Structure probing data (DMS and 2A3) for a 177-nucleotide construct. It was measured as part of the RMDB library TTRDEL. As a SHAPE reagent, 2A3 marks flexible, mostly unpaired nucleotides at the ribose 2'-OH. The RNA was probed in 150 mM KOAc, 10 mM MgCl2 and 150 mM bicine (pH 8.5) at 24 C.
RNA sequence: GGGAACGACUCGAGUAGAGUCGAAAAGAUAUGGAUCUUCGUGUGCCAGUCGCUCGGAAACGAGUCGACGGUAAUACACGAGAUCCUAAGUCAAAGCGGUACAUUAGCUUCGGCUAAUGUACCGCAACAACUUAACGGAGUUCGCUCCGUUAAGUUGAAAAGAAACAACAACAACAAC
Reactivity to DMS in 0.01 (KOAc 150mM, MgCl2 10mM, bicine 150mM(pH8.5), 24C), signal-to-noise 5, nucleotides 027 to 126: g010a040u010a300u010g000g010a000u000c000u000u010c010g040u000g010u000g010c010c020a090g010u000c000g000c010u010c000g010g000a110a060a210c000g010a010g010u010c010g020a020c000g010g000u000a060a110u010a250c010a000c000g000a030g000a020u000c000c000u010a010a050g000u000c030a090a100a160g000c000g010g010u000a000c000a000u000u010a000g000c000u000u000c220g020g010c000u000a000a000u000g020u000a000c000c000g010c010a010a030
Reactivity to 2A3 in 0.01 (KOAc 150mM, MgCl2 10mM, bicine 150mM(pH8.5), 24C), signal-to-noise 6, nucleotides 027 to 126: g030a010u090a060u170g010g000a010u010c050u180u180c270g000u020g010u020g020c040c090a160g030u000c000g020c000u010c000g020g020a090a080a050c010g010a010g160u220c070g010a010c000g000g000u090a140a080u140a040c000a000c010g000a000g000a000u000c000c000u000a060a020g030u010c050a070a070a080g000c000g000g000u000a000c000a010u000u000a010g010c000u050u070c300g040g000c010u010a000a010u000g000u000a000c000c000g000c000a000a000